[RMDB]
RNA sequence: GGGAACGACUCGAGUAGAGUCGAAAACAGGUAGCCCAGACCUUCAAGGCUACGGUGCUUUGCGACGCACGGUCUGAUUCUUCACAACGACGUUCACCGCGUCUUCUUCCAUCCCCCUGGGGCAGUGUAUAACCAGCAGCCUUCGGGCUGCUGGUAACUCCUAAUGUAACUUCGGUUACAUUAGGAGAAAAGAAACAACAACAACAAC
Reactivity to DMS in 0.01 (KOAc 150mM, MgCl2 10mM, bicine 150mM(pH8.5), 24C), signal-to-noise 1, nucleotides 027 to 156: c030a060g030g020u000a040g010c020c020c100a150g020a110c040c000u020u010c080a130a180g040g010c000u000a020c070g030g000u000g010c150u000u000u000g010c050g020a040c060g040c050a110c050g040g010u000c020u000g010a110u000u030c090u000u000c030a090c110a060a150c030g040a070c010g040u010u020c060a090c110c040g020c040g020u000c030u000u000c020u000u010c030c000a110u000c000c000c000c020c060u000g000g020g030g040c030a050g020u000g040u000a080u000a050a080c020c000a030g000c010a030g000c000c000u000u010c300g030g020g080c020u010g000c000u000g020g000u000a020a040